[RMDB]
RNA sequence: GGGAACGACUCGAGUAGAGUCGAAAACGUCGAUGGAACAGAACACCACCUCCACCCCAAUACCACCAAUUCAACUUUACAUGAAUUAUAAGCGAGAAAUAACUUGGACUGUGUUAAGUCAUUGAGUUUCUGGGGUUUAACUGUUAUUAUAGUUAAACCUGCAUAUUUACUUCGGUAAAUAUGCAGGAAAAGAAACAACAACAACAAC
Reactivity to DMS in 0.01 (KOAc 150mM, MgCl2 10mM, bicine 150mM(pH8.5), 24C), signal-to-noise 1, nucleotides 027 to 156: c080g000u010c060g010a120u010g010g030a120a300c040a110g020a060a050c070a080c030c020a140c060c050u000c040c020a090c020c000c020c000a120a090u000a100c030c040a100c040c020a050a120u000u000c020a030a040c020u010u000u000a040c070a140u010g020a070a080u000u010a120u060a020a000g050c000g020a140g020a160a070a110u000a040a110c040u010u020g050g000a070c050u010g030u000g020u000u010a050a080g010u000c060a120u000u000g000a170g030u000u010u010c030u000g000g010g000g030u010u000u000a020a010c020u000g000u000u010a140u000u010a080u020a070g020u000u000a050a050a080
Reactivity to 2A3 in 0.01 (KOAc 150mM, MgCl2 10mM, bicine 150mM(pH8.5), 24C), signal-to-noise 3, nucleotides 027 to 156: c040g070u090c060g050a100u070g050g030a060a000c030a090g060a140a030c020a030c030c000a020c000c030u110c020c020a070c000c000c000c000a000a000u060a050c040c020a030c030c000a020a010u030u080c000a060a040c000u070u110u080a060c030a040u090g050a140a050u280u130a060u080a200a020g000c040g020a020g080a070a150a110u120a100a030c040u020u050g070g030a050c050u040g000u010g010u100u050a010a020g000u040c010a020u030u120g010a090g050u040u040u000c060u050g000g000g000g000u000u000u010a000a000c000u000g080u110u040a120u240u060a040u120a090g050u070u080a120a020a040
The record gives the reactivity of an RNA of 207 nucleotides to DMS and 2A3. DMS adducts were read by reverse transcription with MarathonRT. Reactivities are given for positions 27 through 156. The DMS profile rests on 1,882 reads. The RNA was probed in 150 mM KOAc, 10 mM MgCl2 and 150 mM bicine (pH 8.5) at 24 C. For 2A3, 1,007 sequencing reads were counted.